Annotation:
This 177-nucleotide RNA was probed chemically with DMS and 2A3. The RNA was probed in 150 mM KOAc, 10 mM MgCl2 and 150 mM bicine (pH 8.5) at 24 C.

RNA sequence: GGGAACGACUCGAGUAGAGUCGAAAAGCUUCGGGUUCGCGCUGUGCCCUUGCACCUUGGGCAGCGCUGAGGCUGAGCUGACGCAGCUGGCCCCAGUCUACCUGCUGCAGGUCUUCGAGGGAGAGCAAGGGCUAUAGCAUUUCGAUGCUAUAGCCCUAAAAGAAACAACAACAACAAC
Reactivity to DMS in 0.01 (KOAc 150mM, MgCl2 10mM, bicine 150mM(pH8.5), 24C), signal-to-noise 1, nucleotides 027 to 126: g000c000u000u050c050g030g010g000u000u020c020g000c010g050c000u000g000u000g080c010c010c000u000u010g000c300a110c030c160u000u000g000g000g000c000a000g060c110g000c010u030g000a070g030g000c030u000g000a000g000c040u010g000a150c150g000c040a150g000c010u020g000g000c010c000c010c000a170g000u000c040u000a070c250c000u010g030c030u000g010c040a170g020g000u020c060u000u000c120g000a020g030g000g050a090g070a050g000c030a090
Reactivity to 2A3 in 0.01 (KOAc 150mM, MgCl2 10mM, bicine 150mM(pH8.5), 24C), signal-to-noise 3, nucleotides 027 to 126: g040c000u090u050c110g060g030g130u110u150c060g000c030g030c050u040g060u190g110c000c000c000u020u060g080c080a120c010c050u060u110g040g000g000c010a000g010c030g000c010u020g000a000g030g000c010u070g040a000g050c010u030g010a180c100g050c250a000g000c000u030g020g010c000c000c000c000a020g010u040c070u080a100c000c020u020g010c020u090g080c020a030g040g030u030c030u150u130c120g050a100g050g070g000a180g000a020g020c070a060

Description
For 2A3, 1,399 sequencing reads were counted. High 2A3 reactivity points to a flexible backbone, as in loops and unpaired stretches. 2A3 adducts were read by reverse transcription with SuperScript II with manganese.